[RMDB]
RNA sequence: GGGAACGACUCGAGUAGAGUCGAAAAUCGCUCCAGGUUUCCCCGGGGAUCCCUGAAGCGCUCCUCCGAGCCGCCUUCUUUUUUCUUUUCUGCUCAGGAGGUCAGGUGUGAACCACAGGAACCACGAGUUUAGUUCCGAGGAACCAACUGAGGUUCCCCUAGUAUACCAGUUCGCUGGUAUACUAGGAAAAGAAACAACAACAACAAC
Reactivity to 2A3 in 0.01 (KOAc 150mM, MgCl2 10mM, bicine 150mM(pH8.5), 24C), signal-to-noise 1, nucleotides 027 to 156: u160c010g000c050u000c000c030a030g080g020u060u100u060c010c010c030c090g080g000g000g000a000u000c000c000c000u000g040a100a120g210c050g180c240u090c040c000u010c050c080g000a000g000c020c040g030c080c050u120u140c130u250u300u140u160u220u190c100u160u300u100u060c040u080g000c030u000c070a100g000g030a000g000g000u000c000a000g060g000u180g010u040g300a010a000c040c010a040c050a050g000g000a000a000c000c000a010c010g010a030g030u050u080u200a010g000u010u000c010c010g000a030g000g000a000a000c040c040a070a130c170u290g040a220g070g000u010u000c000c000
The record gives the reactivity of an RNA of 207 nucleotides to 2A3. For 2A3 the reverse transcriptase was SuperScript II with manganese. The reactions ran in a buffer of 150 mM KOAc, 10 mM MgCl2 and 150 mM bicine (pH 8.5), at 24 C. Reactivities are given for positions 27 through 156. Values are in units of 0.01, from 0 to 300, in steps of 10.